[RMDB]
RNA sequence: GGGAACGACUCGAGUAGAGUCGAAAAACGCUUCACAAUGUGCGGCAAAGAAACAUUGUUUAUGCAAAGGCACUUCGCAAUGAGUGCUCAAACAUUGCUUAUUCAAACACGCUUCACAAUGUGCGACAAAACUUCACGGUCUUCGGACCGUGAAGAACAACAAACCGCAGUUCGCUGCGGUUUGUUGAAAAGAAACAACAACAACAAC
Reactivity to 2A3 in 0.01 (KOAc 150mM, MgCl2 10mM, bicine 150mM(pH8.5), 24C), signal-to-noise 2, nucleotides 027 to 156: a000c060g030c060u040u030c010a000c000a000a060u020g010u000g020c000g070g080c060a120a110a100g130a090a110a010c000a020u000u000g040u020u050u070a060u040g040c030a030a020a040g030g010c000a010c010u090u110c110g060c200a120a150u210g020a010g000u010g040c040u020c010a030a050a000c060a060u040u020g000c030u100u130a050u090u120c040a000a100a000c040a030c110g020c010u030u020c020a030c030a100a110u070g020u040g060c010g060a000c100a000a040a060a050c000u010u000c000a000c010g000g000u010c000u030u090c140g090g030a000c000c010g000u000g000a000a000g000a000a000

Chemical mapping of a 207-nucleotide RNA with 2A3. It was measured as part of the RMDB library M2RFPK. 2A3 adducts were read by reverse transcription with SuperScript II with manganese.